[RMDB]
RNA sequence: GGGAACGACUCGAGUAGAGUCGAAAAAUACAUACUGACACCGGUUGCUCAACAGGCUGUGUGGGACAAUAGAAUAACAAGGCUUUCAAUUUGAGCUUGACGGCUGCAAACCGAAUGGAGUGAAAUCGUAACCGGACUCACUUCGGUGAGUCCGGAAUCAAUGGAACUUGUUCGCAAGUUCCAUUGAAAAAGAAACAACAACAACAAC
Reactivity to 2A3 in 0.01 (KOAc 150mM, MgCl2 10mM, bicine 150mM(pH8.5), 24C), signal-to-noise 2, nucleotides 027 to 156: a000u160a020c040a010u130a010c010u120g070a040c010a020c060c070g000g050u050u050g030c030u060c080a110a050c030a100g070g020c010u000g000u010g000u080g150g020g030a010c030a040a090u060a110g110a110a020u110a110a020c030a070a020g030g000c050u010u090u090c040a060a100u030u080u180g000a020g030c000u010u060g030a020c040g010g050c010u020g050c020a000a080a100c030c010g010a040a050u110g020g030a060g050u080g060a040a050a050u090c050g010u070a040a040c000c000g020g000a000c000u000c000a030c010u020u020c120g070g010u010g000a010g000u000c000c000g000g000a000a000
Reactivity to DMS in 0.01 (KOAc 150mM, MgCl2 10mM, bicine 150mM(pH8.5), 24C), signal-to-noise 2, nucleotides 027 to 156: a140u000a100c040a100u000a160c070u000g000a160c030a070c040c020g000g030u000u000g030c020u000c030a080a070c070a070g030g020c010u000g020u000g010u000g000g010g010a140c030a050a130u020a120g020a050a140u010a060a090c040a080a110g030g020c020u000u000u000c060a070a160u030u000u000g010a050g020c110u010u000g000a080c030g000g000c000u000g040c050a090a080a070c000c020g020a070a120u000g000g000a100g000u010g020a060a070a130u000c080g040u000a080a170c030c010g020g030a020c000u000c010a030c020u010u000c280g040g040u000g020a020g030u010c000c000g000g000a000a030